An RNA of 177 nucleotides, treated with DMS and 2A3 and read out base by base.
For 2A3, 16,859 sequencing reads were counted.
DMS adducts were read by reverse transcription with MarathonRT.
Reactivities are rounded to 0.1 and cut off at 0 and 3.
Values cover nucleotides 27 to 126.
The RNA was probed in 150 mM KOAc, 10 mM MgCl2 and 150 mM bicine (pH 8.5) at 24 C.
For 2A3 the reverse transcriptase was SuperScript II with manganese.
[RMDB]
RNA sequence: GGGAACGACUCGAGUAGAGUCGAAAAUACGACGUAUUCGUACGUCGUAAAGGUACGAAAGUACAAAGGUGCAAAAGCAUGAGCUCCUAAAAAUCAUGCAAAACACGAGCCGAUUCGUCGGCUCGAAGAAUUAUAUCGGUUUCGACCGAUAUAAUUCAAAAGAAACAACAACAACAAC
Reactivity to DMS in 0.01 (KOAc 150mM, MgCl2 10mM, bicine 150mM(pH8.5), 24C), signal-to-noise 4, nucleotides 027 to 126: u000a000c010g010a000c000g030u000a000u000u010c210g040u000a010c000g010u000c000g020u000a010a040a090g010g010u000a000c010g010a140a080a180g010u000a010c000a100a110a090g000g000u000g010c050a100a070a090a120g010c000a000u010g000a030g000c010u000c000c000u000a030a010a010a080a130u000c000a000u000g000c000a090a040a060a150c260a160c020g000a020g020c000c000g000a030u000u000c170g010u000c000g010g000c000u000c000g000a030a060
Reactivity to 2A3 in 0.01 (KOAc 150mM, MgCl2 10mM, bicine 150mM(pH8.5), 24C), signal-to-noise 6, nucleotides 027 to 126: u040a000c000g000a000c000g000u010a020u020u090c180g030u040a010c010g000u000c000g000u000a030a000a010g100g000u000a000c000g030a140a020a030g000u000a010c050a070a160a050g000g000u020g010c020a110a120a090a100g000c000a010u010g000a000g010c020u120c180c120u270a020a010a010a010a030u010c000a000u000g000c000a040a060a010a010c120a010c020g000a000g000c000c000g000a010u030u040c150g050u010c000g100g000c010u000c000g000a000a000